The record gives the reactivity of an RNA of 207 nucleotides to 2A3. Values cover nucleotides 27 to 156. 2A3 adducts were read by reverse transcription with SuperScript II with manganese. It was measured as part of the RMDB library M2RFPK. The RNA was probed in 150 mM KOAc, 10 mM MgCl2 and 150 mM bicine (pH 8.5) at 24 C.
RNA sequence: GGGAACGACUCGAGUAGAGUCGAAAAAAAUCACCUCGGUAUGAUUGGGGUGAGACCUAGGAACCGUAGGGGUAUUCUCAAAGGAAGCUUUUGCAGUGACGCCCAUGUAAGUGGGAUAUAACAACAGAUCAGUUUCGCAGUUUCGACUGCGAAACAAGCAUUGUUGAUAGUUCGCUAUCAACAAUGCAAAAGAAACAACAACAACAAC
Reactivity to 2A3 in 0.01 (KOAc 150mM, MgCl2 10mM, bicine 150mM(pH8.5), 24C), signal-to-noise 2, nucleotides 027 to 156: a000a000a000u030c030a010c000c000u010c020g100g030u170a160u160g090a180u170u180g000g020g000g010u030g020a020g000a020c000c000u040a030g050g090a040a040c050c020g030u130a010g010g010g030g000u060a150u060u040c020u020c000a100a130a010g090g000a030a070g040c040u060u030u110u230g010c050a000g000u020g070a020c070g020c010c010c000a000u050g060u140a110a060g010u050g000g040g000a000u050a010u030a150a020c100a060a060c020a030g070a130u180c030a000g000u000u000u000c000g000c000a000g010u000u000u160c220g150a030c000u030g000c000g000a000a000a010c000a000a000